Structure probing data (DMS and 2A3) for a 177-nucleotide construct.
Reactivities are given for positions 27 through 126.
The data come from the RNA Mapping Database (RMDB), library RFMREP.
For 2A3 the reverse transcriptase was SuperScript II with manganese.
The 2A3 profile rests on 1,416 reads.
The DMS profile rests on 2,364 reads.
The reactions ran in a buffer of 150 mM KOAc, 10 mM MgCl2 and 150 mM bicine (pH 8.5), at 24 C.
RNA sequence: GGGAACGACUCGAGUAGAGUCGAAAACGCCGUGAUUCCAUGGAAUAAGGAGCGUUUAGGGGCCAGGUUAUUAAGCGACGAGGGGUGAAAUCUGGUGACUCGCUUAGGAGCAACAGAGGCGAAAGCGGUCUAGUACAUUCUUCGGAAUGUACUAGACAAAAGAAACAACAACAACAAC
Reactivity to DMS in 0.01 (KOAc 150mM, MgCl2 10mM, bicine 150mM(pH8.5), 24C), signal-to-noise 3, nucleotides 027 to 126: c060g020c000c020g000u010g010a080u000u000c020c050a150u000g030g000a060a050u010a090a240g020g000a100g010c050g000u000u000u000a130g000g000g000g030c070c040a040g000g000u000u020a080u010u010a070a070g020c040g020a050c060g000a080g000g000g000g010u010g010a110a050a080u000c030u000g000g000u010g000a070c300u000c010g000c070u000u000a040g000g000a070g000c020a060a040c080a060g000a070g000g040c030g000a040a090a060g010c090g010
Reactivity to 2A3 in 0.01 (KOAc 150mM, MgCl2 10mM, bicine 150mM(pH8.5), 24C), signal-to-noise 2, nucleotides 027 to 126: c010g000c000c040g100u050g070a070u100u030c030c020a070u210g090g030a050a040u100a080a040g070g010a100g050c020g010u010u020u120a020g020g000g030g050c000c000a000g000g000u050u040a080u090u100a090a030g020c010g030a030c010g010a080g050g050g010g000u020g030a060a030a000u030c010u030g080g010u010g100a120c020u000c000g030c000u010u040a010g020g070a040g000c020a000a050c010a050g050a000g040g010c020g000a050a000a000g030c100g040